[RMDB]
RNA sequence: GGGAACGACUCGAGUAGAGUCGAAAAUACAGAGAUAUGGAAUCAGGUGAGGAGAUAGAACAAUGCCUUCCAUUUCCCGGGUGCCCUUCCUAGCAUGUGUUUGCUCCGUUGUUUUAGAUAAGGUCUGGGGGAUGAGUCAAUGUCACAGGAGCUGAUAAGCUACCUAAAAUUUCGAUUUUAGGUAGCUAAAAGAAACAACAACAACAAC
Reactivity to 2A3 in 0.01 (KOAc 150mM, MgCl2 10mM, bicine 150mM(pH8.5), 24C), signal-to-noise 3, nucleotides 027 to 156: u200a010c050a020g100a000g040a050u070a050u180g020g030a070a020u090c050a100g010g020u070g020a040g050g060a040g030a090u100a090g090a090a020c050a070a100u090g040c000c000u000u020c050c000a030u050u020u040c010c000c040g000g020g020u030g030c010c030c000u040u070c020c010u070a060g000c020a010u120g090u050g010u170u080u110g020c020u010c030c020g040u050u050g010u000u070u050u090a060g010a070u080a090a060g040g010u030c050u070g040g000g000g000g010a010u060g020a020g020u000c030a020a080u060g050u060c040a020c010a110g010g040a020g020c040u040g150a000u240a070
Reactivity to DMS in 0.01 (KOAc 150mM, MgCl2 10mM, bicine 150mM(pH8.5), 24C), signal-to-noise 2, nucleotides 027 to 156: u000a090c030a110g000a060g000a100u010a050u070g010g010a120a120u000c040a060g040g050u000g010a070g000g020a100g020a130u000a120g060a050a060c070a070a070u000g010c010c020u020u010c020c020a120u000u000u010c020c000c020g000g030g020u000g010c020c000c020u000u010c020c010u010a070g060c050a060u000g020u000g020u000u000u000g000c000u020c060c050g050u000u010g000u000u000u010u000a070g030a110u000a060a090g010g010u000c020u010g010g000g010g010g050a040u000g000a130g010u010c050a060a120u000g010u020c010a060c060a080g000g010a090g030c010u010g000a080u000a090